[RMDB]
RNA sequence: GGGAACGACUCGAGUAGAGUCGAAAACUUGAUUUCCACUCGAAACAAAAGCACAAACGAUUUCAAUGUUUGACGACGAACCUACUCGCUCCAAAUAUGCUUUUGUAGUAGGUAUGAUGCGAGUUUAAGUGGUAGCCUGAUUCGUCAGGCUACCACUAAAAGAAACAACAACAACAAC
Reactivity to 2A3 in 0.01 (KOAc 150mM, MgCl2 10mM, bicine 150mM(pH8.5), 24C), signal-to-noise 1, nucleotides 027 to 126: c010u030u120g030a020u150u050u000c020c000a000c000u110c040g060a040a050a040c030a000a040a040a000g060c050a030c030a020a080a030c010g160a140u010u260u150c080a180a040u190g000u010u030u030g050a020c030g000a030c020g000a080a040c000c000u070a000c000u020c050g060c020u000c000c050a020a070a050u090a060u110g050c000u170u000u020u110g010u000a000g010u060a020g040g000u000a060u160g060a050u060g040c020g000a020g000u040u120u110a030
Reactivity to DMS in 0.01 (KOAc 150mM, MgCl2 10mM, bicine 150mM(pH8.5), 24C), signal-to-noise 1, nucleotides 027 to 126: c180u000u010g060a090u000u010u000c030c080a090c010u020c090g000a150a130a120c120a000a050a030a000g020c030a120c090a030a050a090c100g010a170u000u000u000c180a050a050u000g010u000u000u000g010a210c200g000a130c070g010a060a140c040c000u010a030c050u000c000g060c090u000c060c150a070a130a070u010a080u000g050c030u000u000u010u000g000u000a000g030u000a010g000g020u000a010u020g020a030u000g010c030g000a040g000u000u000u000a090
Conditions: 150 mM KOAc, 10 mM MgCl2 and 150 mM bicine (pH 8.5), 24 C.
This 177-nucleotide RNA was probed chemically with 2A3 and DMS.
It was measured as part of the RMDB library OK2TST.
2A3 adducts were read by reverse transcription with SuperScript II with manganese.